[RMDB]
RNA sequence: GGGAACGACUCGAGUAGAGUCGAAAAAGGAAUGCCGUGGCGAUGGUGAUUCGUGAUGGAUGAUGGGCUGAUGGUACCUUUACGCCCGGCGAGGUACUAACGACAACAAGAAACCACGACAAAACAGCCAUGAGUAAAUCUUCGGAUUUACUCAUGGAAAAGAAACAACAACAACAAC
Reactivity to DMS in 0.01 (KOAc 150mM, MgCl2 10mM, bicine 150mM(pH8.5), 24C), signal-to-noise 4, nucleotides 027 to 126: a080g000g040a120a060u030g020c040c020g030u000g010g010c020g000a120u030g000g010u000g020a070u020u000c080g020u000g000a080u030g000g000a060u020g000a080u000g020g010g020c020u030g020a100u000g010g020u000a010c010c010u000u000u000a080c100g010c030c000c030g000g000c250g020a010g010g010u000a020c010u000a070a140c110g010a080c130a050a100c100a060a080g020a130a190a050c020c010a030c050g020a060c130a030a040a060a090c180a120g010
Reactivity to 2A3 in 0.01 (KOAc 150mM, MgCl2 10mM, bicine 150mM(pH8.5), 24C), signal-to-noise 8, nucleotides 027 to 126: a000g180g020a130a030u090g030c020c020g040u090g010g000c060g050a100u090g020g090u080g040a130u050u050c030g020u100g040a080u100g030g070a040u050g040a060u060g020g070g030c040u060g020a100u110g030g030u010a020c000c000u000u030u040a050c040g010c010c020c000g000g000c010g000a000g000g000u010a010c010u050a090a030c040g100a010c030a130a010c010a060a050g070a120a080a010c020c000a030c000g030a020c070a020a100a040a020c030a010g030
Notes:
Source: RMDB library OK1LIB, as collected in RNAgym. Structure probing data (DMS and 2A3) for a 177-nucleotide construct. The reactions ran in a buffer of 150 mM KOAc, 10 mM MgCl2 and 150 mM bicine (pH 8.5), at 24 C. The 2A3 profile rests on 9,588 reads. 2A3 adducts were read by reverse transcription with SuperScript II with manganese. For DMS the reverse transcriptase was MarathonRT. 2A3 is a SHAPE reagent: it acylates the 2'-hydroxyl of flexible nucleotides of all four kinds. For DMS, 6,477 sequencing reads were counted.